[RMDB]
RNA sequence: GGGAACGACUCGAGUAGAGUCGAAAAGCCGUCGUCACUCCAGGGCCCCAGGUGGAGAUGGCCCAGAAUGGUUCAAGCCGCAUCUUAACCUUGCGAGGCUGCCAACUGGGGGAUGCAGGGACCGUGAGCCUUUUAACGUAUUCGUACGUUAAAAGGCAAAAGAAACAACAACAACAAC
Reactivity to 2A3 in 0.01 (KOAc 150mM, MgCl2 10mM, bicine 150mM(pH8.5), 24C), signal-to-noise 3, nucleotides 027 to 126: g040c010c010g090u100c030g040u020c030a030c140u000c010c050a070g130g070g040c010c000c010c020a010g020g000u020g000g020a110g020a140u050g020g000c000c010c000a070g160a150a110u200g010g010u060u130c070a040a050g030c030c040g030c140a070u090c000u050u040a030a050c020c000u010u020g030c030g060a130g060g000c000u030g000c020c040a020a020c020u000g000g000g010g010g000a000u040g050c040a050g000g030g040a020c040c010g060u060g090a030
Reactivity to DMS in 0.01 (KOAc 150mM, MgCl2 10mM, bicine 150mM(pH8.5), 24C), signal-to-noise 3, nucleotides 027 to 126: g000c030c010g030u010c100g020u000c020a100c020u000c050c030a060g000g000g020c020c010c010c010a040g000g020u000g000g010a060g030a060u010g010g010c020c020c030a090g000a100a050u010g010g010u010u000c130a070a070g000c090c060g020c120a090u010c030u000u000a070a070c050c020u000u010g010c140g020a180g040g020c010u000g020c030c040a050a160c040u000g000g000g000g000g010a060u000g020c100a060g000g000g000a070c010c050g010u010g000a230